[RMDB]
Structure probing data (2A3 and DMS) for a 177-nucleotide construct. For DMS, 956 sequencing reads were counted.
RNA sequence: GGGAACGACUCGAGUAGAGUCGAAAACACAAGCGACCCAUCCUCAUAAACACCACUGCAUCCCCAGCCGCGCAGCUCCUUGGAAACAACGUCAAAAACGCCUUUGAAUGCCUCCAAAUGCCUGUCGCAAGCUCGCUGGAUUCGUCCAGCGAGCUUGAAAAGAAACAACAACAACAAC
Reactivity to 2A3 in 0.01 (KOAc 150mM, MgCl2 10mM, bicine 150mM(pH8.5), 24C), signal-to-noise 2, nucleotides 027 to 126: c110a000c000a010a040g090c040g080a060c050c010c000a030u040c000c020u050c000a150u150a170a100a000c020a030c010c000a080c050u050g040c020a100u050c000c000c000c050a030g010c000c010g000c000g030c000a020g000c040u060c010c020u030u050g070g030a010a040a000c030a040a090c010g070u110c100a000a030a060a110a060c110g000c010c010u100u050u030g090a100a040u090g000c000c000u010c010c000a000a000a000u070g000c030c000u060g010u030c020g090
Reactivity to DMS in 0.01 (KOAc 150mM, MgCl2 10mM, bicine 150mM(pH8.5), 24C), signal-to-noise 1, nucleotides 027 to 126: c030a170c050a070a080g000c090g010a050c000c000c080a000u010c000c030u040c080a000u040a020a080a130c100a110c080c000a030c010u000g050c160a150u000c000c000c050c230a040g030c040c010g000c010g080c040a130g000c060u000c000c020u000u000g000g000a040a150a060c160a080a150c040g010u000c070a080a030a080a030a170c010g000c000c000u000u030u000g000a040a060u080g010c010c000u000c000c020a000a070a070u000g000c090c000u020g000u010c090g040